[RMDB]
RNA sequence: GGGAACGACUCGAGUAGAGUCGAAAACUCUCGGCGAUGGACAGCACCGGCGCUGACUAUGCCAGCGCCCUGGCCGACGCAAGUGCGCUGGGCUAUGCGGAGGCUGAUCCCACCGCAGACGUCGAAGCUGAUAGCUCUUAUUCGUAAGAGCUAUCAGAAAAGAAACAACAACAACAAC
Reactivity to DMS in 0.01 (KOAc 150mM, MgCl2 10mM, bicine 150mM(pH8.5), 24C), signal-to-noise 8, nucleotides 027 to 126: c040u000c030u010c020g000g010c000g020a080u000g000g010a080c040a030g000c060a080c060c050g010g020c030g020c020u000g000a040c060u000a120u010g020c020c000a020g010c020g010c010c030c030u000g010g020c020c030g020a070c080g010c080a110a070g010u000g010c050g020c030u000g020g020g010c030u010a060u010g010c030g010g020a260g010g010c030u000g010a090u010c130c000c020a050c030c010g020c030a050g000a090c160g000u000c050g000a120a120g010
Reactivity to 2A3 in 0.01 (KOAc 150mM, MgCl2 10mM, bicine 150mM(pH8.5), 24C), signal-to-noise 7, nucleotides 027 to 126: c010u010c010u000c030g030g000c020g040a080u100g010g020a020c000a030g010c020a060c060c050g070g010c020g000c030u010g020a050c050u120a090u300g070c030c000a000g000c000g000c000c010c010u040g020g000c040c050g050a040c050g010c050a090a070g070u060g100c050g000c030u060g000g070g000c030u070a080u220g020c030g020g040a070g100g000c020u020g020a180u040c010c010c010a040c010c040g020c030a040g030a140c060g040u060c030g030a060a020g050